Notes:
Conditions: 150 mM KOAc, 10 mM MgCl2 and 150 mM bicine (pH 8.5), 24 C. Structure probing data (2A3 and DMS) for a 177-nucleotide construct. In probing experiments dimethyl sulfate is read out at A N1 and C N3, which are open when not base-paired. 2A3 adducts were read by reverse transcription with SuperScript II with manganese. The DMS profile rests on 1,982 reads. Reactivities are given for positions 27 through 126. 2A3 is a SHAPE reagent: it acylates the 2'-hydroxyl of flexible nucleotides of all four kinds.
RNA sequence: GGGAACGACUCGAGUAGAGUCGAAAAUUUUAGCAAGCACCUUUGUGUAAACUCUGUAUAAAGAGUAAAAUAUACAAAAUUGACGUGAUUAACCGAAAUCGGAAAAGCACUAAUGUUUGUUAAAUCGGAUCUACUUUAAGUUCGCUUAAAGUAGAUCAAAAGAAACAACAACAACAAC
Reactivity to 2A3 in 0.01 (KOAc 150mM, MgCl2 10mM, bicine 150mM(pH8.5), 24C), signal-to-noise 2, nucleotides 027 to 126: u010u000u000u010a000g000c000a030a000g020c000a020c030c020u020u020u000g000u010g000u000a060a080a020c000u050c000u030g050u080a300u100a300a290a000g000a010g010u020a000a020a050a040u050a000u000a010c010a010a030a050a090u080u060g020a020c050g010u020g000a030u010u100a030a030c000c030g060a260a210a120u300c030g000g020a040a080a000a000g020c000a010c000u070a080a040u020g010u000u020u000g000u000u030a010a030a040u070c020g100
Reactivity to DMS in 0.01 (KOAc 150mM, MgCl2 10mM, bicine 150mM(pH8.5), 24C), signal-to-noise 3, nucleotides 027 to 126: u000u000u020u000a030g000c000a020a020g020c000a060c300c150u000u000u000g010u000g020u000a030a110a060c000u000c000u000g010u010a150u010a180a080a040g000a020g020u020a110a040a070a140u000a030u010a010c000a020a010a060a110u000u010g000a120c180g010u000g000a030u000u000a070a220c000c000g000a080a090a100u020c050g010g010a030a180a050a120g000c000a010c000u010a110a120u000g010u000u010u000g020u010u000a030a030a020u000c260g000